Source: RMDB library OK2TST, as collected in RNAgym.
Chemical mapping of a 177-nucleotide RNA with 2A3 and DMS.
[RMDB]
RNA sequence: GGGAACGACUCGAGUAGAGUCGAAAAGCUUGAAGUGGCAGUCUUUGCCAUUUCAGUUGCGGGGCUUGGCGCGCUUGCCAUUUUCCUCUGGAUAUUCCCCAAUGCGCUCGGGUCCAAUGUCGCGCCAGCCCUUUUACUGGUUCGCCAGUAAAAGGGCAAAAGAAACAACAACAACAAC
Reactivity to 2A3 in 0.01 (KOAc 150mM, MgCl2 10mM, bicine 150mM(pH8.5), 24C), signal-to-noise 1, nucleotides 027 to 126: g000c060u100u110g020a040a000g000u000g010g010c000a000g130u180c100u190u300u020g000c000c020a000u000u020u000c000a030g020u090u090g020c010g000g070g010g000c060u040u050g000g010c030g060c020g040c050u050u110g020c000c030a080u050u000u030u050c010c020u020c070u040g000g050a080u040a100u210u100c000c010c010c000a060a190u080g010c040g000c010u010c030g050g000g030u000c010c020a030a030u070g020u110c040g000c000g000c000c000a000
Reactivity to DMS in 0.01 (KOAc 150mM, MgCl2 10mM, bicine 150mM(pH8.5), 24C), signal-to-noise 2, nucleotides 027 to 126: g020c020u010u010g030a000a010g050u000g000g010c000a020g010u010c240u020u010u010g010c000c000a000u000u000u010c000a040g000u000u010g000c140g010g010g010g010c090u000u000g030g000c030g010c020g020c060u000u000g010c040c060a110u000u000u000u000c020c030u010c190u000g020g010a100u000a190u010u010c020c010c000c180a080a070u010g020c090g000c020u000c060g020g000g000u000c060c050a070a060u010g000u010c010g000c020g000c010c040a070
The reactions ran in a buffer of 150 mM KOAc, 10 mM MgCl2 and 150 mM bicine (pH 8.5), at 24 C. 2A3 is a SHAPE reagent: it acylates the 2'-hydroxyl of flexible nucleotides of all four kinds.